[RMDB]
RNA sequence: GGGAACGACUCGAGUAGAGUCGAAAACGUAGGACAAACCGAAGCGAAAGCUGUCGUCCAGUACGUUUCCGGUGAUCAAGGACGUAAGCCGGAGGAGCAAAGGUGAUUAGAGACCCCUGUAGUUCCGCGUACCGUAUUCGUUCGCGAAUACGGUACGAAAAGAAACAACAACAACAAC
Reactivity to DMS in 0.01 (KOAc 150mM, MgCl2 10mM, bicine 150mM(pH8.5), 24C), signal-to-noise 2, nucleotides 027 to 126: c060g040u000a110g020g000a100c030a110a070a100c280c140g000a260a030g010c000g010a120a090a180g000c000u000g010u010c080g010u000c040c010a120g000u000a030c020g000u000u000u000c010c040g000g020u010g000a060u000c030a080a050g000g000a120c090g040u000a060a270g000c010c030g020g010a150g000g000a030g040c040a080a120a080g000g000u010g000a070u010u000a150g000a150g000a090c070c040c030c010u000g010u000a220g000u030u000c050c030g010
Reactivity to 2A3 in 0.01 (KOAc 150mM, MgCl2 10mM, bicine 150mM(pH8.5), 24C), signal-to-noise 1, nucleotides 027 to 126: c010g040u010a010g000g030a000c030a070a130a040c080c050g100a070a000g000c010g050a050a010a030g000c030u050g050u120c030g060u000c030c010a010g110u010a010c030g000u000u020u000c000c030g000g050u070g010a040u230c050a110a100g180g040a050c060g040u090a030a030g020c000c030g000g030a030g020g030a040g000c010a110a000a000g050g000u070g030a080u010u140a080g040a010g010a070c000c000c000c030u020g050u120a030g020u010u020c000c000g010